[RMDB]
RNA sequence: GGGAACGACUCGAGUAGAGUCGAAAAGAUAUGGAGCCAUAUGUAGAGCAACAGCUCAGCUCGGAAACGAGCUGAGGACAUGCUUGAAAUGGCUCCUAAGUCAAAUCUAUGGGUUCGCCCAUAGAAACACAUACUUCCUGUUCGCAGGAAGUAUGUGAAAAGAAACAACAACAACAAC
Reactivity to 2A3 in 0.01 (KOAc 150mM, MgCl2 10mM, bicine 150mM(pH8.5), 24C), signal-to-noise 3, nucleotides 027 to 126: g040a020u070a040u180g000g010a000g000c000c000a000u070a050u160g030u040a010g000a000g030c020a010a160c030a250g100c010u000c000a010g000c000u000c020g020g030a070a070a030c010g000a000g000c010u000g000a000g000g000a030c010a040u080g010c010u000u020g020a030a030a020u000g010g000c010u010c000c000u000a010a000g010u000c000a000a000a150u010c000u000a010u010g010g000g070u050u100c300g110c030c000c000a000u000a000g010a010a060a000
Reactivity to DMS in 0.01 (KOAc 150mM, MgCl2 10mM, bicine 150mM(pH8.5), 24C), signal-to-noise 5, nucleotides 027 to 126: g000a040u000a300u010g000g010a000g000c000c000a000u000a060u010g000u010a230g000a010g010c010a020a100c150a280g000c010u000c000a000g000c000u000c000g020g000a100a100a230c000g000a000g000c000u000g000a000g010g010a050c210a090u000g010c000u010u000g000a100a060a030u000g000g000c000u000c000c000u000a010a060g010u000c040a100a130a120u000c000u000a000u000g000g000g020u000u000c280g010c000c000c000a000u000a000g000a030a130a130

Background
Structure probing data (2A3 and DMS) for a 177-nucleotide construct. Reactivities are given for positions 27 through 126. The reactions ran in a buffer of 150 mM KOAc, 10 mM MgCl2 and 150 mM bicine (pH 8.5), at 24 C. For DMS, 4,128 sequencing reads were counted. The 2A3 profile rests on 8,631 reads.